[RMDB]
Chemical mapping of a 177-nucleotide RNA with 2A3 and DMS. DMS adducts were read by reverse transcription with MarathonRT. The data come from the RNA Mapping Database (RMDB), library OK2TRN.

RNA sequence: GGGAACGACUCGAGUAGAGUCGAAAAGAAGGGCAUGGCGGACGAUGAGGCGAGGCAGCGCGACGCCCUGUACGAGCGCGCAGAACGCCUUGCCUCCACUCUGGCCGCCAUCGGCGACUCCCUGCGCCGCCCUGACAUUAUUCGUAAUGUCAGGGCGAAAAGAAACAACAACAACAAC
Reactivity to 2A3 in 0.01 (KOAc 150mM, MgCl2 10mM, bicine 150mM(pH8.5), 24C), signal-to-noise 2, nucleotides 027 to 126: g070a060a060g210g070g050c150a040u020g020g000c020g030g000a020c010g040a050u300g000a000g000g020c000g000a000g020g040c020a030g000c010g050c000g060a050c000g020c020c080c010u080g090u140a040c060g020a080g160c020g030c000g000c020a010g100a110a030c100g000c000c030u000u000g000c000c010u000c000c000a020c020u040c020u050g120g000c000c000g000c000c010a000u010c010g010g010c000g060a060c060u030c000c010c000u000g030c000g030c000
Reactivity to DMS in 0.01 (KOAc 150mM, MgCl2 10mM, bicine 150mM(pH8.5), 24C), signal-to-noise 2, nucleotides 027 to 126: g020a140a080g010g020g050c160a050u010g000g020c000g010g020a100c070g010a070u010g000a020g000g000c010g030a030g000g020c000a130g000c130g000c000g010a100c000g010c060c030c070u010g010u000a120c110g000a100g000c000g000c010g030c000a070g010a140a150c190g000c000c000u000u000g000c010c010u010c010c110a020c070u000c040u020g000g030c000c000g000c020c020a000u000c100g000g010c010g000a110c070u000c030c000c000u000g010c000g020c020